[RMDB]
RNA sequence: GGGAACGACUCGAGUAGAGUCGAAAAAGCGAUGAUACGUCAUCGCAACGAUUGCCUGAUCGUAAAACAGGAGACGGCCGUGACCGCGACCACGUAAAAAAGCGUAACGUGGUCUACGGACCACGAAAAAAGCGCGGAACGUUCGCGUUCCGCGCAAGACUAGUGUGUAGUUCGCUACACACUAGUCAAAAGAAACAACAACAACAAC
Reactivity to 2A3 in 0.01 (KOAc 150mM, MgCl2 10mM, bicine 150mM(pH8.5), 24C), signal-to-noise 2, nucleotides 027 to 156: a000g010c000g000a000u000g000a010u030a090c220g080u020c000a000u000c000g000c000a010a020c000g000a010u000u010g010c010c000u010g010a000u000c040g160u240a000a000a030a020c010a000g020g010a020g050a040c160g020g000c030c000g000u010g000a000c000c020g000c000g020a050c020c090a010c020g020u070a130a050a070a080a110a050g010c010g010u030a070a020c000g000u000g010g010u000c020u020a010c020g000g030a130c020c000a020c030g140a040a040a080a020a020a020g000c010g000c000g000g000a000a000c010g040u090u090c090g020c020g060u000u000c000c010g220c000g000c000a000a000